[RMDB]
RNA sequence: GGGAACGACUCGAGUAGAGUCGAAAAUGGGGUGAUUCAGCUAAAACACCUUACACGUUUAGUAUGUACGGUUACAAGAAUGCUCGCGCAUGGGGUCGCAUCAUUGCAGAUAACUAUGAAUCCGAAAUGCUGGAUGCUUACGCAAGCUGGAUUGAUAGUCAACACCAUUGUUCGCAAUGGUGUUGACAAAAGAAACAACAACAACAAC
Reactivity to DMS in 0.01 (KOAc 150mM, MgCl2 10mM, bicine 150mM(pH8.5), 24C), signal-to-noise 1, nucleotides 027 to 156: u010g000g000g120g020u010g020a160u010u000c010a180g000c050u000a050a160a160a140c100a090c040c040u000u000a040c080a090c030g010u000u010u020a240g030u030a030u010g030u010a010c100g000g020u000u000a170c120a130a160g020a140a240u000g010c000u000c060g150c090g010c040a090u000g000g050g020g030u000c010g040c030a090u000c020a100u000u000g020c040a040g010a050u010a070a120c060u010a040u030g000a050a080u010c000c020g010a120a010a060u010g010c010u000g020g000a040u000g000c020u000u010a080c060g000c020a030a080g020c030u000g010g000a120u000u010g020a090u000a110
Reactivity to 2A3 in 0.01 (KOAc 150mM, MgCl2 10mM, bicine 150mM(pH8.5), 24C), signal-to-noise 2, nucleotides 027 to 156: u130g030g000g000g000u030g000a050u040u040c030a020g010c050u070a090a000a000a040c050a000c010c000u060u020a030c050a000c000g130u230u200u090a130g030u060a120u140g020u010a030c060g000g050u040u040a040c030a020a060g080a130a090u040g050c010u010c030g060c010g040c030a010u090g000g000g000g050u030c040g000c030a010u030c010a020u010u110g000c030a020g000a080u060a110a060c000u000a010u210g060a030a020u020c020c010g010a010a030a070u070g000c040u020g080g000a060u050g020c030u140u110a050c080g000c050a050a000g000c000u030g000g020a020u000u040g020a030u050a010
Chemical mapping of a 207-nucleotide RNA with DMS and 2A3.
DMS adducts were read by reverse transcription with MarathonRT.
For DMS, 2,207 sequencing reads were counted.
The RNA was probed in 150 mM KOAc, 10 mM MgCl2 and 150 mM bicine (pH 8.5) at 24 C.
The data come from the RNA Mapping Database (RMDB), library OK3TST.